The data come from the RNA Mapping Database (RMDB), library OK2TRN. The record gives the reactivity of an RNA of 177 nucleotides to DMS and 2A3. High DMS reactivity at an A or C suggests that its Watson-Crick edge is free. Values are in units of 0.01, from 0 to 300, in steps of 10. 2A3 adducts were read by reverse transcription with SuperScript II with manganese.
[RMDB]
RNA sequence: GGGAACGACUCGAGUAGAGUCGAAAAAGGCUGGAGUGCAGUAGCACAAUCAUGGCUCACUGCAGCCUCGACCUCCCAGGUUGAAGGGAUCUUCCUACCUCAGCCUCCUGAGUAGCUGGGACUACAGCUAGGAGAUCUGUUUCGACAGAUCUCCUAGAAAAGAAACAACAACAACAAC
Reactivity to DMS in 0.01 (KOAc 150mM, MgCl2 10mM, bicine 150mM(pH8.5), 24C), signal-to-noise 6, nucleotides 027 to 126: a030g020g000c010u000g000g000a040g010u000g000c230a040g030u000a070g030c050a110c150a100a120u020c290a150u000g010g000c010u000c050a010c000u000g010c000a010g000c030c000u000c030g010a110c160c090u000c010c000c030a100g000g010u000u000g010a070a060g010g000g000a100u010c110u000u000c030c020u000a110c070c020u000c030a030g010c020c020u010c090c050u000g010a100g010u010a030g020c030u010g000g000g000a110c080u010a030c070a120g010
Reactivity to 2A3 in 0.01 (KOAc 150mM, MgCl2 10mM, bicine 150mM(pH8.5), 24C), signal-to-noise 4, nucleotides 027 to 126: a000g020g000c030u020g110g060a030g030u030g000c120a050g040u100a040g090c060a050c050a250a180u210c100a140u260g080g000c010u020c030a000c000u120g050c010a030g000c000c010u000c000g060a060c000c010u030c010c000c000a000g020g020u030u020g050a110a080g020g000g040a050u030c080u070u020c030c030u040a130c010c010u020c010a020g010c020c000u050c030c050u160g060a090g010u020a010g000c040u100g070g020g020a030c010u030a030c020a020g010